An RNA of 177 nucleotides, treated with DMS and read out base by base. The RNA was probed in 150 mM KOAc, 10 mM MgCl2 and 150 mM bicine (pH 8.5) at 24 C. For DMS, 714 sequencing reads were counted.
RNA sequence: GGGAACGACUCGAGUAGAGUCGAAAACACCGGGUCUUCGGACCCGGUGAAAAGGAGCCAAAAUAAGAACGGAAAGGGCAGACGGAGCGCAACUCUGUCAAAAAACUGAAGUCUUCGGACUUCAGAACUAAUGCAGAAACUUCGGUUUCUGCAUUAGAAAAGAAACAACAACAACAAC
Reactivity to DMS in 0.01 (KOAc 150mM, MgCl2 10mM, bicine 150mM(pH8.5), 24C), signal-to-noise 1, nucleotides 027 to 126: c000a000c000c000g000g000g000u010c000u000u010c200g020g030a030c000c020c000g010g000u000g010a020a090a120a080g030g000a200g000c030c040a030a090a040a050u030a040a080g000a060a180c100g000g000a040a100a090g000g000g000c250a050g000a010c060g030g000a010g050c080g020c200a120a120c000u000c020u000g000u010c050a000a140a020a050a090a180c000u000g000a000a000g020u000c000u000u010c150g020g000a000c000u000u000c000a000g000a020a190